[RMDB]
RNA sequence: GGGAACGACUCGAGUAGAGUCGAAAACCCGAGAGGGAAGGAGUGAGGCUUAUCCCGGGGAACUCGGCGAAUCGUCCCCACAUACCAGGUUCCCCAGGGCCCCUUCCAAAUUGACCGAGGGGGGAAGGAAAGUCUGUAUGUUCGCAUACAGACUUUCAAAAGAAACAACAACAACAAC
Reactivity to DMS in 0.01 (KOAc 150mM, MgCl2 10mM, bicine 150mM(pH8.5), 24C), signal-to-noise 1, nucleotides 027 to 126: c010c010c020g010a110g000a060g020g000g010a060a050g000g000a070g020u000g030a090g010g030c190u030u000a150u020c000c010c020g000g020g000g000a020a030c020u000c040g010g060c080g010a060a150u010c060g000u000c020c020c030c060a080c170a090u000a100c020c010a080g010g000u000u000c000c000c000c010a030g020g000g010c020c030c000c010u000u030c040c030a040a040a110u010u000g010a120c130c000g020a050g010g010g000g010g000g000a120a090g010

This 177-nucleotide RNA was probed chemically with DMS. Conditions: 150 mM KOAc, 10 mM MgCl2 and 150 mM bicine (pH 8.5), 24 C. Reactivities are given for positions 27 through 126.